RNA sequence: GGGAACGACUCGAGUAGAGUCGAAAAUGGACAGACAGAUAUGCCGAAUGUUGGAAGAAAGGGAUUCAAUCAUUAGAUCCCUCUCUGAUGGAUAUGCAACUGUCCACUGCAUGUCAUAUUCAGAGUACGUGAUAAAUGGAUUCGUCCAUUUAUCACGAAAAGAAACAACAACAACAAC
Reactivity to 2A3 in 0.01 (KOAc 150mM, MgCl2 10mM, bicine 150mM(pH8.5), 24C), signal-to-noise 5, nucleotides 027 to 126: u070g020g010a010c010a030g030a020c020a040g110a060u080a030u180g070c010c040g060a150a110u170g020u140u110g120g060a120a040g030a110a100a020g050g010g010a000u100u080c050a020a130u090c030a070u080u100a040g000a040u000c000c000c000u000c000u000c000u010g010a010u030g000g000a000u000a000u010g010c010a010a030c020u020g020u000c010c000a000c010u010g000c010a010u010g000u000c010a080u060a110u230u010c000a000g020a010g030u050a050
Reactivity to DMS in 0.01 (KOAc 150mM, MgCl2 10mM, bicine 150mM(pH8.5), 24C), signal-to-noise 9, nucleotides 027 to 126: u010g010g020a020c010a090g020a140c190a100g010a100u000a070u010g010c020c020g020a130a100u010g020u010u010g010g020a070a070g010a040a060a020g000g010g000a020u000u000c070a100a150u010c260a130u010u010a140g000a030u000c000c000c000u000c000u000c000u000g000a030u000g000g010a010u000a000u000g000c010a010a050c020u000g010u000c010c020a200c200u000g000c010a010u000g010u000c010a070u010a060u000u000c020a020g010a030g010u010a270

The record gives the reactivity of an RNA of 177 nucleotides to 2A3 and DMS. The RNA was probed in 150 mM KOAc, 10 mM MgCl2 and 150 mM bicine (pH 8.5) at 24 C. The data come from the RNA Mapping Database (RMDB), library OK2TST. For 2A3 the reverse transcriptase was SuperScript II with manganese. For 2A3, 7,719 sequencing reads were counted. For DMS the reverse transcriptase was MarathonRT. Reactivities are given for positions 27 through 126.